[RMDB]
RNA sequence: GGGAACGACUCGAGUAGAGUCGAAAAUGCGCCGGCAACGCCAGAUCAUGGGGCUGUUGCUCGGCCUGGUGCUGCUCAUGGCGCUGAUCGCCGGGGCUGCGCUGUGGCUGGCGGUGCGCCAGGCCCAGGGUGACUGAUUAUUCGUAAUCAGUCACCCAAAAGAAACAACAACAACAAC
Reactivity to DMS in 0.01 (KOAc 150mM, MgCl2 10mM, bicine 150mM(pH8.5), 24C), signal-to-noise 2, nucleotides 027 to 126: u000g020c070g020c010c010g000g000c010a020a010c010g010c000c010a060g010a090u000c150a110u010g010g000g000g010c010u020g010u010u000g010c010u010c040g020g020c000c010u000g010g000u000g010c000u000g000c050u010c080a110u010g030g000c000g010c210u010g020a080u010c070g010c000c020g020g010g000g000c010u000g000c000g030c030u000g030u010g030g000c030u010g010g010c050g010g010u000g000c020g000c070c100a090g000g000c000c020c040a100
Reactivity to 2A3 in 0.01 (KOAc 150mM, MgCl2 10mM, bicine 150mM(pH8.5), 24C), signal-to-noise 3, nucleotides 027 to 126: u060g000c030g020c020c000g030g010c010a000a030c000g000c000c000a050g040a300u190c030a140u200g110g000g080g000c130u190g040u050u070g040c040u030c020g000g020c000c020u020g000g030u000g010c020u010g020c010u040c110a260u250g010g000c010g000c090u090g090a180u260c030g010c020c000g030g010g000g000c010u030g000c110g010c040u030g050u080g130g020c020u010g050g030c060g000g070u080g000c000g000c020c010a070g040g000c020c000c010a010
Structure probing data (DMS and 2A3) for a 177-nucleotide construct. DMS adducts were read by reverse transcription with MarathonRT. The RNA was probed in 150 mM KOAc, 10 mM MgCl2 and 150 mM bicine (pH 8.5) at 24 C. The 2A3 profile rests on 4,083 reads. For 2A3 the reverse transcriptase was SuperScript II with manganese.